Source information
This 177-nucleotide RNA was probed chemically with DMS and 2A3. Values cover nucleotides 27 to 126. The reactions ran in a buffer of 150 mM KOAc, 10 mM MgCl2 and 150 mM bicine (pH 8.5), at 24 C. Source: RMDB library OK1LIB, as collected in RNAgym.
RNA sequence: GGGAACGACUCGAGUAGAGUCGAAAAGAAAAUAAGAGCGUAAUCGCGUCUUGACGUGAGUGAGCCCACACGAAGAGCUAUCCCAAGUGGGAUAGCAUAGCUGACAAUACGCUAAGAUUCGUGUGAAACGUAAUCGAGCAUUCGUGCUCGAUUACGUAAAAGAAACAACAACAACAAC
Reactivity to DMS in 0.01 (KOAc 150mM, MgCl2 10mM, bicine 150mM(pH8.5), 24C), signal-to-noise 3, nucleotides 027 to 126: g000a090a030a070a060u040a100a060g030a140g010c010g020u040a150a120u000c010g010c010g010u040c040u020u030g030a040c000g010u020g010a030g010u020g060a120g000c060c050c000a000c000a000c000g020a010a000g000a150g000c000u000a020u010c000c000c000a300a200g040u040g010g000g010a000u000a000g010c000a010u000a020g000c060u030g010a150c200a190a160u020a090c160g010c010u000a030a090g010a200u000u010c000g010u000g000u000g000a030a030
Reactivity to 2A3 in 0.01 (KOAc 150mM, MgCl2 10mM, bicine 150mM(pH8.5), 24C), signal-to-noise 4, nucleotides 027 to 126: g030a000a070a020a050u250a040a020g050a030g000c000g030u070a090a040u030c000g000c000g080u020c050u080u190g090a010c000g020u020g020a010g010u060g030a010g000c000c000c000a000c000a010c000g000a000a010g040a000g040c000u000a000u060c020c000c060a240a140g150u300g100g000g000a000u000a000g000c030a000u030a000g000c020u070g040a040c070a090a280u160a100c110g000c010u010a030a050g110a080u000u000c030g000u000g000u000g050a070a050